[RMDB]
RNA sequence: GGGAACGACUCGAGUAGAGUCGAAAACCUGGCCACUUCGGUGGCCAGGAAAUAGGCGCAGUGGGCUAGCGCCACUCAAAGGCGCGAAAAUAAAUAAGAAUAAAAGAAAAGUGUUCGCACUUUUCAAUCCUAAAUUAGGGUUCGCCCUAAUUUAGGAAAAAGAAACAACAACAACAAC
Reactivity to DMS in 0.01 (KOAc 150mM, MgCl2 10mM, bicine 150mM(pH8.5), 24C), signal-to-noise 1, nucleotides 027 to 126: c000c000u020g000g020c000c010a010c020u000u000c130g070g000u010g020g040c000c000a000g000g000a010a040a120u000a050g000g000c070g000c030a110g040u000g020g000g010c020u010a140g020c030g010c020c000a030c180u010c300a030a180a050g000g000c020g030c000g000a110a050a090a040u000a000a050a030u020a170a260g000a230a170u010a020a060a180a140g010a040a000a020a070g010u000g010u000u050c260g000c000a000c010u000u020u000u000c000a090a150